[RMDB]
RNA sequence: GGGAACGACUCGAGUAGAGUCGAAAAAUUCAAACAUACUUUUUAAUAUUGAUACUUCUGAUUGACUUAGGUUUGCACCAUUUUCUUCAAGAAAACCAACUGUCAUAACCUUUUUAUUUUCCAUUAUAUGCUACGUACCAUUCGUGGUACGUAGCAUAAAAGAAACAACAACAACAAC
Reactivity to 2A3 in 0.01 (KOAc 150mM, MgCl2 10mM, bicine 150mM(pH8.5), 24C), signal-to-noise 1, nucleotides 027 to 126: a000u160u090c010a070a170a040c000a020u090a300c030u300u300u040u020u140a280a160u150a250u050u040g020a000u050a250c090u000u020c000u090g060a200u150u000g020a060c000u030u010a030g000g000u030u000u010g000c000a100c000c000a090u000u000u280u000c080u050u050c050a060a040g180a110a020a000a000c000c000a020a020c000u000g080u300c040a060u000a150a070c000c000u000u000u060u060u000a300u160u000u110u000c000c000a000u110u100a070u020